[RMDB]
RNA sequence: GGGAACGACUCGAGUAGAGUCGAAAACGACGCCGGACAUACCGCUGAACUGGCCGUCGAAGAUGUUCACGCGGCAGCCCCUGACCCUGCGCAAGACGGGAUCAGAUGAUCCCUGAACCGUCCCGAGCUGAUCGGCACUAUGUGGUGGCACACCGGGCACUUAGCCGUACUUCGGUACGGCUAAGUGAAAAGAAACAACAACAACAAC
Reactivity to 2A3 in 0.01 (KOAc 150mM, MgCl2 10mM, bicine 150mM(pH8.5), 24C), signal-to-noise 2, nucleotides 027 to 156: c070g040a000c020g010c020c020g010g010a040c030a080u180a060c100c020g040c040u060g020a060a080c050u030g050g040c010c120g060u070c040g090a070a030g050a050u180g020u090u170c020a010c090g000c020g010g000c050a020g010c000c010c010c010u030g050a110c000c000c010u010g000c030g000c070a060a040g060a030c040g040g040g020a050u020c000a000g220a300u250g020a000u070c020c000c000u020g010a020a020c010c030g050u030c000c000c020g030a030g010c040u050g050a090u110c040g020g070c040a050c070u090a090u200g050u060g060g050u030g050g010c040a000c000a010c030c010g000g010g000
Reactivity to DMS in 0.01 (KOAc 150mM, MgCl2 10mM, bicine 150mM(pH8.5), 24C), signal-to-noise 1, nucleotides 027 to 156: c030g010a110c020g000c020c010g040g020a080c060a150u000a050c070c000g020c040u010g000a030a130c030u000g010g060c050c040g030u000c100g000a150a070g020a190u010g040u010u000c030a140c110g050c030g000g090c000a080g030c050c020c030c000u010g040a070c000c030c050u000g030c060g030c060a130a120g000a100c090g000g000g000a100u000c000a150g010a150u010g020a100u000c040c040c020u010g030a030a050c030c050g000u000c000c000c030g010a100g000c120u000g000a060u010c040g000g020c020a080c040u010a070u030g000u000g000g000u000g010g000c030a150c090a110c010c010g030g010g020
The record gives the reactivity of an RNA of 207 nucleotides to 2A3 and DMS. It was measured as part of the RMDB library OK3TST. Conditions: 150 mM KOAc, 10 mM MgCl2 and 150 mM bicine (pH 8.5), 24 C.